An RNA of 177 nucleotides, treated with DMS and 2A3 and read out base by base. High 2A3 reactivity points to a flexible backbone, as in loops and unpaired stretches.

RNA sequence: GGGAACGACUCGAGUAGAGUCGAAAAGAGUGUGGCGAGGGAGCUGGACAUCCUCACCGUGGGGGUGGUGACCAGGCCCUUCGGUUUCGAGGGCAGACAGAAGGCUCGGAUCGCCGAGGAAGGGAUCGUUCACAUUGACUUUCGAGUCAAUGUGAACAAAAGAAACAACAACAACAAC
Reactivity to DMS in 0.01 (KOAc 150mM, MgCl2 10mM, bicine 150mM(pH8.5), 24C), signal-to-noise 3, nucleotides 027 to 126: g020a070g010u000g020u000g020g010c040g010a030g010g010g000a060g000c010u000g000g000a210c120a040u000c000c020u000c000a080c110c160g010u000g000g010g010g010g020u000g010g020u000g000a080c110c090a090g000g020c020c000c010u000u000c030g000g010u000u010u010c100g010a030g010g010g010c120a070g000a080c140a050g000a300a260g000g000c020u000c030g020g020a160u010c060g010c000c010g040a060g000g000a110a050g000g000g000a080u000c150
Reactivity to 2A3 in 0.01 (KOAc 150mM, MgCl2 10mM, bicine 150mM(pH8.5), 24C), signal-to-noise 2, nucleotides 027 to 126: g050a010g040u200g010u070g050g000c020g000a030g010g100g000a000g010c020u030g000g030a000c000a030u030c000c000u060c030a090c120c070g050u220g000g030g000g000g060u060g020g030u110g070a120c080c000a060g210g020c010c000c010u070u110c020g030g050u090u110u200c030g000a010g000g000g000c020a030g020a090c030a020g080a100a010g040g020c000u040c050g000g140a080u040c000g000c020c010g020a050g050g030a050a070g030g030g010a030u150c110

It was measured as part of the RMDB library OK2TST.